[RMDB]
RNA sequence: GGGAACGACUCGAGUAGAGUCGAAAACAUCUCUUCGGCUAGUGAGCGAUACGCGCUCCGUUGUGCUCAUUAUUAUUCGCGUUACGCACGACCGUGUAACAUCCCGGCACGAGGCGAAUCAGGUGGCUCUCGCUGGAGGUUUCGACCUUCAGUGGGGAAAAGAAACAACAACAACAAC
Reactivity to DMS in 0.01 (KOAc 150mM, MgCl2 10mM, bicine 150mM(pH8.5), 24C), signal-to-noise 2, nucleotides 027 to 126: c080a190u010c070u000c210u000u000c000g000g000c140u000a240g000u000g000a150g000c000g000a300u120a060c070g000c100g000c060u010c020c030g000u010u020g010u000g020c010u010c050a040u000u000a060u020u020a070u010u000c030g020c040g000u010u000a060c080g000c030a070c070g000a060c070c020g000u000g010u000a020a040c060a080u000c020c020c020g000g000c010a030c010g000a050g010g010c010g010a040a060u000c110a050g000g010u010g010g010c060
Reactivity to 2A3 in 0.01 (KOAc 150mM, MgCl2 10mM, bicine 150mM(pH8.5), 24C), signal-to-noise 6, nucleotides 027 to 126: c030a100u000c010u000c000u070u110c030g020g000c000u040a090g080u050g300a040g000c000g020a090u080a160c060g010c000g000c050u000c000c010g030u020u040g030u030g020c010u020c070a040u010u130a080u100u050a060u040u100c040g000c010g050u050u060a030c030g020c020a010c030g020a040c020c030g020u020g010u030a050a040c010a070u050c010c000c000g020g010c010a000c020g020a030g020g000c010g020a010a020u040c010a010g010g030u020g030g010c010

Source information
Chemical mapping of a 177-nucleotide RNA with DMS and 2A3. Conditions: 150 mM KOAc, 10 mM MgCl2 and 150 mM bicine (pH 8.5), 24 C. Values are in units of 0.01, from 0 to 300, in steps of 10. For 2A3 the reverse transcriptase was SuperScript II with manganese. The data come from the RNA Mapping Database (RMDB), library OK1LIB.